Overview: Chemical mapping of a 177-nucleotide RNA with DMS and 2A3. The data come from the RNA Mapping Database (RMDB), library 15KREP. As a SHAPE reagent, 2A3 marks flexible, mostly unpaired nucleotides at the ribose 2'-OH. For DMS, 15,404 sequencing reads were counted. Reactivities are given for positions 27 through 126. Conditions: 150 mM KOAc, 10 mM MgCl2 and 150 mM bicine (pH 8.5), 24 C. For 2A3, 12,567 sequencing reads were counted.
RNA sequence: GGGAACGACUCGAGUAGAGUCGAAAAUUGACGGUGUGCAAUAUUAUUGCUACACGUCUAAGGACACUUUAGAUGAUAUCUUACAACAGGCUAAUAAGUCUGUUGGUAUUAUAUCUAUGCCUUUGGGGCCUUAAAGAUAGUUCGCUAUCUUUAAGGCAAAAGAAACAACAACAACAAC
Reactivity to DMS in 0.01 (KOAc 150mM, MgCl2 10mM, bicine 150mM(pH8.5), 24C), signal-to-noise 7, nucleotides 027 to 126: u010u000g010a020c020g020g010u010g030u000g000c000a010a010u000a160u010u010a090u000u000g000c010u010a020c010a040c010g010u000c000u000a050a060g000g010a110c110a080c200u000u000u000a090g000a100u000g000a020u000a010u000c030u000u000a040c010a010a010c000a000g010g000c000u000a150a110u010a080a040g020u000c000u000g000u000u000g010g010u010a000u000u000a020u000a010u000c000u000a090u000g000c030c010u000u000u010g010g010g010
Reactivity to 2A3 in 0.01 (KOAc 150mM, MgCl2 10mM, bicine 150mM(pH8.5), 24C), signal-to-noise 8, nucleotides 027 to 126: u070u080g020a020c050g070g040u040g010u010g050c010a020a010u090a110u300u100a060u100u040g000c000u050a010c050a020c020g000u000c000u000a020a020g030g020a010c020a030c140u130u140u150a050g020a070u090g010a000u030a000u020c020u010u030a010c000a000a000c000a000g000g000c000u030a110a070u120a300a090g010u000c000u000g000u010u010g000g000u010a000u000u030a010u000a000u000c010u010a050u090g040c000c000u030u060u100g100g000g110